The data come from the RNA Mapping Database (RMDB), library OK1LIB. Chemical mapping of a 177-nucleotide RNA with 2A3 and DMS.
[RMDB]
RNA sequence: GGGAACGACUCGAGUAGAGUCGAAAAAGAGGCCGCCUUCGUCGUCAUCGGCGGCCUCCGACAGCGACAGCGACAGCGCCUGGGGGCCGAACAGCCUGGCGGCCCAGGUGGAGCGGCUGCUAGAGGCGCAGGUGGUUCCGUUCGCGGGACCACCUGCAAAAGAAACAACAACAACAAC
Reactivity to 2A3 in 0.01 (KOAc 150mM, MgCl2 10mM, bicine 150mM(pH8.5), 24C), signal-to-noise 1, nucleotides 027 to 126: a000g010a000g000g000c000c010g010c000c020u100u070c050g240u020c040g060u080c000a110u110c160g000g010c020g000g000c010c000u010c020c010g020a020c000a030g010c020g070a080c050a020g010c000g030a060c010a080g100c010g000c010c000u000g040g000g000g040g000c010c000g050a110a060c030a030g050c020c020u080g000g010c000g040g180c020c030c000a000g040g000u050g030g080a010g040c000g020g000c000u000g000c010u050a060g000a080g210g000c070
Reactivity to DMS in 0.01 (KOAc 150mM, MgCl2 10mM, bicine 150mM(pH8.5), 24C), signal-to-noise 1, nucleotides 027 to 126: a030g010a020g010g000c010c000g000c000c010u020u020c160g030u000c110g030u010c050a070u010c290g010g000c010g000g080c000c000u000c000c000g040a260c080a040g030c060g020a130c010a100g010c000g070a140c110a130g020c000g030c000c000u040g040g000g000g010g030c000c000g040a100a080c130a250g000c000c070u000g000g000c030g010g020c040c000c010a050g000g000u020g010g000a220g000c000g000g020c000u000g010c010u020a150g020a110g000g050c110
For 2A3, 969 sequencing reads were counted.